RNA sequence: GGGAACGACUCGAGUAGAGUCGAAAACUCAGUUCCCAGGUCCUGUGGUCAGGAUAGCUUGUCUCAGUGUAGCAGGACAAGCCGCAGACAAAACCCCUCAGACACUGAGUUAAAGAAGGAAGGGCUUUAUUCAGCCGGGAGCUUAGGCAAGACUCAAGUAUAUGGUAGGAUUCGUCCUACCAUAUACAAAAGAAACAACAACAACAAC
Reactivity to 2A3 in 0.01 (KOAc 150mM, MgCl2 10mM, bicine 150mM(pH8.5), 24C), signal-to-noise 2, nucleotides 027 to 156: c030u030c010a010g000u020u010c010c000c010a000g040g000u060c000c040u080g020u070g040g050u070c030a110g000g050a080u040a050g010c010u000u030g010u030c020u010c070a110g030u020g040u190a050g080c120a080g080g000a000c000a000a000g020c000c010g090c050a040g020a100c040a100a170a070a090c030c010c000c000u050c030a030g010a050c050a030c060u030g000a000g030u010u080a110a090a000g040a030a030g030g010a040a000g030g020g000c000u090u100u060a150u160u070c020a020g030c020c010g000g000g010a030g000c030u030u030a010g000g040c020a030a030g030a060c020u040c160a060a050
Reactivity to DMS in 0.01 (KOAc 150mM, MgCl2 10mM, bicine 150mM(pH8.5), 24C), signal-to-noise 3, nucleotides 027 to 156: c010u000c030a100g010u000u000c000c000c000a130g030g020u000c020c020u000g020u010g030g040u000c050a120g000g020a170u010a060g000c010u000u000g030u010c010u000c010a190g030u000g010u010a150g030c090a130g000g010a050c010a020a080g030c000c040g030c090a130g000a120c060a050a050a130a150c020c010c000c020u000c060a150g020a110c060a160c020u010g000a050g010u000u000a050a080a120g030a100a080g040g020a070a090g010g020g020c030u000u010u000a090u030u000c060a080g030c040c030g000g000g010a060g010c050u000u000a060g020g050c030a050a140g000a150c020u010c010a060a300